[RMDB]
RNA sequence: GGGAACGACUCGAGUAGAGUCGAAAAGAUAUGGAACCCGAGCUUUUGACGCUUCGUCGGAAACGAUAGAAGCGAUAAGCUCAUAGGGUUCCUAAGUCAAAGAAUUGUCACUUCGGUGACAAUUCAAGACAGUGUAGGUGUUCGCACCUACACUGUCAAAAGAAACAACAACAACAAC
Reactivity to DMS in 0.01 (KOAc 150mM, MgCl2 10mM, bicine 150mM(pH8.5), 24C), signal-to-noise 2, nucleotides 027 to 126: g010a020u000a250u000g010g010a010a020c000c000c010g010a020g000c010u000u000u000u000g010a180c030g020c000u000u000c000g000u010c000g010g010a090a040a130c000g010a030u000a100g010a000a000g000c010g020a050u000a010a020g010c000u000c000a120u010a300g020g000g000u000u000c000c000u000a000a080g010u000c030a160a150a140g000a020a000u000u000g000u000c000a020c010u000u030c220g000g020u000g000a000c000a000a000u000u000c000a030a140
Reactivity to 2A3 in 0.01 (KOAc 150mM, MgCl2 10mM, bicine 150mM(pH8.5), 24C), signal-to-noise 3, nucleotides 027 to 126: g020a030u060a030u140g000g020a020a000c000c000c020g010a020g000c040u160u300u260u300g170a090c020g000c000u000u000c000g030u020c000g000g000a070a050a020c000g010a000u090a300g020a040a000g000c010g000a000u020a030a010g010c010u020c010a050u230a040g000g020g000u020u000c000c000u000a020a000g020u010c040a140a080a050g000a010a000u000u020g000u000c000a000c010u070u100c300g160g000u000g000a010c000a000a000u010u000c000a000a020